An RNA of 207 nucleotides, treated with DMS and 2A3 and read out base by base. It was measured as part of the RMDB library M2RFPK.
RNA sequence: GGGAACGACUCGAGUAGAGUCGAAAAUUGAAAUUGAACCGUCCUGUUAUCGAAAGAUAGGCAGAAGAUACGAAAUGUGUGACAGCAUGGGAAGUAAAGGCAGACCGUGGUUACCUUGAGUAUCUUAAUUAGGGGGACGAGUUCGCUCGUCCCCCAACCCAUCUUAUGUGUUCGCACAUAAGAUGGGAAAAGAAACAACAACAACAAC
Reactivity to DMS in 0.01 (KOAc 150mM, MgCl2 10mM, bicine 150mM(pH8.5), 24C), signal-to-noise 2, nucleotides 027 to 156: u010u010g000a070a090a110u000u000g000a040a160c050c010g020u000c020c000u000g020u000u000a040u000c040g010a170a170a210g000a040u000a010g020g020c050a060g030a040a020g010a070u000a020c010g010a150a110a040u000g020u000g020u000g010a060c040a200g010c040a080u010g030g010g010a120a270g040u010a070a050a090g020g030c020a120g010a300c010c050g050u030g010g010u000u000a010c010c010u010u000g000a290g000u000a050u000c040u000u000a090a170u000u000a130g000g000g010g030g000a030c020g010a020g000u000u020c140g000c000u000c010g000u000c000c000c000c000c000a000a000
Reactivity to 2A3 in 0.01 (KOAc 150mM, MgCl2 10mM, bicine 150mM(pH8.5), 24C), signal-to-noise 3, nucleotides 027 to 156: u080u090g040a000a030a050u100u090g030a070a050c020c030g040u040c010c020u010g010u030u020a020u030c020g040a030a060a040g020a020u030a030g080g030c000a010g020a110a000g000a010u000a010c000g040a070a070a080u070g130u040g010u010g030a010c010a060g160c000a190u020g000g020g040a070a020g070u180a240a130a080g190g050c040a020g050a060c000c000g020u010g010g000u010u010a000c000c010u010u000g000a000g010u000a000u010c020u010u020a080a100u110u160a040g000g000g000g000g000a000c010g000a000g020u030u050c090g020c020u000c000g000u010c000c000c000c000c000a000a010
The RNA was probed in 150 mM KOAc, 10 mM MgCl2 and 150 mM bicine (pH 8.5) at 24 C. For DMS, 3,679 sequencing reads were counted.